[RMDB]
RNA sequence: GGGAACGACUCGAGUAGAGUCGAAAACAGGCGAUCGCGAGAUAACGUCUCAUCUGCCGAGCGAUACAACUCACCAGCAAUCAUCUUUUCUUUUUCUGUGCUCAUUACUGACCUCCGGUUGCUGAAAGGGAGGAUAAGUAUUCGUACUUAUCCUCCCAAAAGAAACAACAACAACAAC
Reactivity to 2A3 in 0.01 (KOAc 150mM, MgCl2 10mM, bicine 150mM(pH8.5), 24C), signal-to-noise 4, nucleotides 027 to 126: c060a010g060g000c020g030a040u020c030g020c060g060a010g020a030u080a160a090c060g060u000c020u010c030a100u020c020u080g040c030c010g010a020g020c020g020a020u040a140c030a040a040c040u050c040a050c050c000a030g010c020a030a070u050c010a040u030c060u050u140u080u060c020u090u140u050u060u030c040u040g060u030g030c000u000c040a070u060u160a110c040u060g070a060c000c010u020c010c030g050g010u040u030g020c000u010g010a080a030a000
Reactivity to DMS in 0.01 (KOAc 150mM, MgCl2 10mM, bicine 150mM(pH8.5), 24C), signal-to-noise 5, nucleotides 027 to 126: c130a140g010g010c060g010a010u000c050g020c100g000a080g010a070u000a060a110c120g000u000c030u010c050a110u000c070u000g010c060c050g010a120g010c050g010a090u000a070c130a090a120c070u010c030a100c120c020a040g010c060a050a060u020c030a070u000c040u000u000u000u000c020u010u000u010u000u000c030u000g030u020g010c030u000c030a040u010u000a090c080u020g010a110c090c020u000c030c060g020g010u000u000g000c010u000g010a080a120a150